[RMDB]
RNA sequence: GGGAACGACUCGAGUAGAGUCGAAAAAGCGGCAAACGGGGUAGUAAUGCAUAGGUAUGUACCCUCUGGUCGGGAAUAGCCACGGGAAACUGUGGGUAAUGCCCGAUGAUCUGGUGACAGCAAAGGUCAUCGUUGUGAGGUUCGCCUCACAACGAUGAAAAGAAACAACAACAACAAC
Reactivity to DMS in 0.01 (KOAc 150mM, MgCl2 10mM, bicine 150mM(pH8.5), 24C), signal-to-noise 1, nucleotides 027 to 126: a050g020c030g070g000c010a010a130a040c130g000g020g000g050u000a000g010u070a020a060u010g030c040a130u020a050g050g050u000a010u050g020u000a080c030c000c000u000c090u050g000g000u000c000g000g000g000a120a090u000a220g000c000c010a000c000g000g020g050a180a150a070c000u000g050u000g000g020g000u000a160a020u060g000c000c120c000g000a000u000g000a060u040c050u000g010g020u000g000a060c000a100g000c180a060a050a050g140g030u000
Reactivity to 2A3 in 0.01 (KOAc 150mM, MgCl2 10mM, bicine 150mM(pH8.5), 24C), signal-to-noise 2, nucleotides 027 to 126: a010g030c020g010g000c040a080a020a050c040g000g030g030g000u040a030g050u050a070a090u030g020c040a080u110a100g280g030u090a020u030g030u020a020c000c020c000u010c030u140g000g000u000c000g020g000g000a050a030u060a050g060c000c000a000c020g040g000g000a000a050a060c000u000g000u020g020g000g000u000a040a060u300g030c000c000c010g010a020u030g000a050u040c110u030g040g000u060g020a020c040a090g060c020a100a090a000g020g030u010

The record gives the reactivity of an RNA of 177 nucleotides to DMS and 2A3. The reactions ran in a buffer of 150 mM KOAc, 10 mM MgCl2 and 150 mM bicine (pH 8.5), at 24 C.